RNA sequence: GGGAACGACUCGAGUAGAGUCGAAAAUAAAACACCAAAGAAAUGGCUUGGUAUUAACAUACAUAAUCAAAUGUAAAUGGUUGGGAAAAACAUCAGUCAUUAAAGGGAUCAUUUCAGAGCAUGAGAGAGACAUGGACUGUUUCAAUAAUUCCUUUGCUCGGACCAGAUUAUUCGUAAUCUGGUCCGAAAAAGAAACAACAACAACAAC
Reactivity to 2A3 in 0.01 (KOAc 150mM, MgCl2 10mM, bicine 150mM(pH8.5), 24C), signal-to-noise 1, nucleotides 027 to 156: u200a050a050a030a000c040a010c000c010a080a090a070g020a010a130a030u070g040g000c000u020u050g000g000u020a100u100u070a150a000c010a060u130a000c000a040u150a170a140u280c100a110a130a130u090g060u220a170a030a170u100g060g000u000u100g060g000g000a000a040a000a000a090c020a020u040c010a050g090u020c000a000u100u160a090a030a030g020g000g030a010u020c000a040u040u090u130c040a040g010a000g000c010a020u020g000a010g010a000g000a000g010a060c040a040u050g030g060a020c000u060g050u040u060u010c070a050a000u090a080a080u040u070c000c000u080u110u030g130c010